[RMDB]
RNA sequence: GGGAACGACUCGAGUAGAGUCGAAAACUGGGGUGGUUAUGUGUUCUGCCGCACCAACACUGACCCCGUAACCGAGGCACGGUACUUCUACGACGCAGUCGGCGGUGACACUUCGGUGCCGGUCCAGCCAACCGUAUAGGUUCGCCUAUACGGUUGGAAAAGAAACAACAACAACAAC
Reactivity to DMS in 0.01 (KOAc 150mM, MgCl2 10mM, bicine 150mM(pH8.5), 24C), signal-to-noise 4, nucleotides 027 to 126: c060u010g010g000g010g040u000g010g020u000u000a020u010g020u000g010u000u000c050u000g000c050c060g030c050a050c060c130a020a030c050a030c030u010g000a050c010c010c010c020g010u010a080a070c040c030g010a090g010g000c100a090c090g000g010u000a060c080u010u000c080u000a140c070g010a070c080g010c130a090g020u000c030g010g010c100g010g010u000g000a110c070a060c050u000u000c100g020g010u000g000c040c010g000g000u010c050c070a090g010
Reactivity to 2A3 in 0.01 (KOAc 150mM, MgCl2 10mM, bicine 150mM(pH8.5), 24C), signal-to-noise 3, nucleotides 027 to 126: c040u060g000g000g040g040u060g000g010u050u060a120u220g050u040g010u080u000c070u130g060c030c030g020c020a020c000c030a040a010c030a000c060u070g110a060c030c000c000c000g050u030a040a020c020c020g020a110g030g050c060a000c190g040g040u050a070c050u090u110c020u050a050c050g100a030c030g050c230a060g020u050c020g030g000c020g040g000u030g030a030c030a010c060u040u060c050g050g000u010g050c020c020g010g020u020c010c010a030g010
Chemical mapping of a 177-nucleotide RNA with DMS and 2A3.
Conditions: 150 mM KOAc, 10 mM MgCl2 and 150 mM bicine (pH 8.5), 24 C.
DMS adducts were read by reverse transcription with MarathonRT.